RNA sequence: GGGAACGACUCGAGUAGAGUCGAAAAUUCAGAGCCUUCGGGCUCUGAACCGUUUUCCUUGUACCCAUUAUUGGUAACUCGGUAAUAAAAGGAAAGUUGCCGCAACUUGUUCGUUCGCGAACAAGAAGUGUGUAAAGUAAUUCGUUACUUUACACACAAAAGAAACAACAACAACAAC
Reactivity to DMS in 0.01 (KOAc 150mM, MgCl2 10mM, bicine 150mM(pH8.5), 24C), signal-to-noise 8, nucleotides 027 to 126: u000u000c000a000g000a020g020c000c000u000u010c230g050g020g020c000u000c000u000g010a000a020c100c070g010u000u000u000u000c010c000u000u010g010u000a090c050c040c130a120u000u000a090u000u000g010g010u000a050a080c140u010c050g010g010u000a040a060u010a060a080a050a040g000g000a050a050a070g000u000u000g000c020c020g000c300a090a160c000u000u000g000u000u000c000g010u010u000c170g010c010g020a010a000c000a010a000g010a070a090
Reactivity to 2A3 in 0.01 (KOAc 150mM, MgCl2 10mM, bicine 150mM(pH8.5), 24C), signal-to-noise 8, nucleotides 027 to 126: u020u010c000a000g010a000g000c000c000u070u080c250g110g010g000c000u000c000u000g000a000a000c010c010g010u050u030u020u020c000c000u020u090g070u090a090c010c010c020a070u120u170a100u190u300g030g000u020a020a020c010u020c090g020g030u060a080a090u090a130a240a040a010g090g000a090a040a010g010u010u020g020c000c020g020c030a050a130c030u000u000g000u010u000c000g020u020u030c260g000c000g100a000a000c000a000a000g040a050a030